Chemical mapping of a 207-nucleotide RNA with 2A3. For 2A3 the reverse transcriptase was SuperScript II with manganese. The 2A3 profile rests on 511 reads. It was measured as part of the RMDB library OK3TST. Values are in units of 0.01, from 0 to 300, in steps of 10. The RNA was probed in 150 mM KOAc, 10 mM MgCl2 and 150 mM bicine (pH 8.5) at 24 C.
RNA sequence: GGGAACGACUCGAGUAGAGUCGAAAACUAUAUUAAUACACAUCCACACACCCAGGCCUGCACAGACUCGUUGGUCCUGGAGAGUAAACGCAUUCCUCCCAAACCCAGCAGCGCCUGGCAGGACAGAGGCGGGCGGGGACCUGGCUCAGGGGGCGGCCCUACCAACUUAUUUCGAUAAGUUGGUAGGAAAAGAAACAACAACAACAAC
Reactivity to 2A3 in 0.01 (KOAc 150mM, MgCl2 10mM, bicine 150mM(pH8.5), 24C), signal-to-noise 1, nucleotides 027 to 156: c040u090a070u060a070u300u290a290a120u290a120c080a030c000a170u040c010c020a070c000a000c000a010c140c000c000a020g030g000c010c010u030g060c000a030c020a090g180a170c040u120c230g110u080u030g030g000u030c020c050u010g010g010a010g000a010g100u030a000a120a000c090g030c240a120u070u070c020c010u000c020c020c000a000a030a030c000c000c040a100g010c010a010g050c000g050c040c000u060g040g020c020a030g000g040a000c000a010g040a080g070g010c060g050g010g000c090g010g000g000g010a010c000c040u060g070g030c030u050c070a060g030g030g000g000g010c010g010g040c000